The data come from the RNA Mapping Database (RMDB), library OK2TRN.
This 177-nucleotide RNA was probed chemically with DMS and 2A3.
[RMDB]
RNA sequence: GGGAACGACUCGAGUAGAGUCGAAAACGCGUAUAUAGCAUCGAUGCCGUACGUACGUAUAUACGUAGCUAGCAUGCAUGCCGAUUAAUCGAUAUGCCGCGUACGAUCGCGGCGCGCUAGCCGAUUAUCUCUCUGGGAACUUCGGUUCCCAGAGAGAAAAAGAAACAACAACAACAAC
Reactivity to DMS in 0.01 (KOAc 150mM, MgCl2 10mM, bicine 150mM(pH8.5), 24C), signal-to-noise 1, nucleotides 027 to 126: c100g000c100g030u010a000u000a040u010a060g010c080a110u020c040g020a130u020g030c070c140g030u000a090c050g020u000a010c200g000u000a030u000a060u000a000c020g030u000a050g050c010u040a010g030c030a040u000g010c110a050u020g020c100c060g000a050u020u000a080a100u010c070g030a080u000a060u000g060c030c070g020c060g010u000a040c190g100a030u010c040g020c020g000g020c010g000c040g020c000u000a050g010c070c060g000a010u020u000a060
Reactivity to 2A3 in 0.01 (KOAc 150mM, MgCl2 10mM, bicine 150mM(pH8.5), 24C), signal-to-noise 1, nucleotides 027 to 126: c040g000c020g070u010a030u000a000u000a040g160c000a080u140c070g100a080u110g140c070c010g100u130a020c000g000u020a030c010g020u020a080u000a000u010a130c010g030u020a020g000c050u030a000g050c000a040u200g000c030a060u080g110c040c020g080a030u220u000a040a220u160c030g110a040u030a080u300g100c100c040g120c060g010u090a080c080g000a030u300c000g000c020g000g000c010g040c000g000c020u030a010g020c010c010g030a090u110u050a060